[RMDB]
RNA sequence: GGGAACGACUCGAGUAGAGUCGAAAAGAACGAGCGACUAAACGGUUUGGAGGAUAACUGAUUUAGGGACUUUCUUUAUACCUCUAUAAAAUCGAAGUAAGGCGAUUGAGGGCGAAUGCUAGGGCAGCCUAACAUAUGGCUUCGGCCAUAUGUUAGGAAAAGAAACAACAACAACAAC
Reactivity to DMS in 0.01 (KOAc 150mM, MgCl2 10mM, bicine 150mM(pH8.5), 24C), signal-to-noise 4, nucleotides 027 to 126: g000a060a060c220g020a040g020c010g000a300c030u010a040a030a050c010g010g020u000u000u010g020g030a110g010g000a110u000a040a020c040u000g000a110u000u000u000a030g000g010g000a170c040u010u000u000c020u000u010u000a110u020a150c040c000u000c070u020a090u020a060a050a060a020u010c050g020a070a070g010u020a060a110g000g000c020g020a040u010u000g010a080g000g000g010c040g000a040a030u010g000c030u000a050g000g000g010c070a110g000
Reactivity to 2A3 in 0.01 (KOAc 150mM, MgCl2 10mM, bicine 150mM(pH8.5), 24C), signal-to-noise 8, nucleotides 027 to 126: g050a030a020c150g010a020g060c010g060a050c010u040a050a020a000c020g020g100u010u050u110g180g050a130g040g040a080u090a140a020c020u040g100a290u110u030u090a060g020g010g040a020c000u030u040u030c010u000u070u040a130u060a070c020c000u010c020u050a090u120a130a200a030a030u050c030g010a060a010g090u120a050a030g170g010c030g030a070u020u070g020a050g000g020g020c020g040a090a030u060g010c050u060a040g030g030g000c010a020g030

Chemical mapping of a 177-nucleotide RNA with DMS and 2A3. The reactions ran in a buffer of 150 mM KOAc, 10 mM MgCl2 and 150 mM bicine (pH 8.5), at 24 C. 2A3 adducts were read by reverse transcription with SuperScript II with manganese. Reactivities are given for positions 27 through 126.